[RMDB]
RNA sequence: GGGAACGACUCGAGUAGAGUCGAAAAGAAUUGGUAUGUAAGCUACCCCUUCCGGUAGCUGCGUCACACUUUAAGAGUGUGCAUACUGAGCCGAAGCUCAGCUUCGGUCCCCCAAGGGAAGUGCAAACAUUUAGUAUCCGUUCGCGGAUACUAAAUGAAAAGAAACAACAACAACAAC
Reactivity to 2A3 in 0.01 (KOAc 150mM, MgCl2 10mM, bicine 150mM(pH8.5), 24C), signal-to-noise 9, nucleotides 027 to 126: g110a020a120u020u020g000g000u000a000u000g000u000a010a010g000c000u000a000c000c000c000c010u010u000c010c010g000g000u000a000g000c000u000g000c000g000u000c000a000c000a000c010u070u140u300a300a150g220a010g250u000g000u000g000c000a000u000a000c000u010g000a000g000c000c000g000a000a000g010c030u090c300a030g000c000u020u000c000g000g000u000c000c000c000c010c010a040a060g050g000g000a010a010g010u030g080c030a050a040a040
Reactivity to DMS in 0.01 (KOAc 150mM, MgCl2 10mM, bicine 150mM(pH8.5), 24C), signal-to-noise 8, nucleotides 027 to 126: g000a080a080u000u000g000g010u000a000u000g000u000a300a180g000c000u000a000c000c010c090c020u010u010c010c010g010g000u000a000g000c000u000g000c010g010u000c000a000c000a000c000u000u010u040a150a080g010a010g020u020g000u000g010c010a000u000a010c010u000g000a010g000c010c000g000a010a020g010c010u070c240a170g010c000u000u000c000g000g000u000c050c030c010c160c140a120a100g010g000g010a000a010g010u030g010c200a110a100a140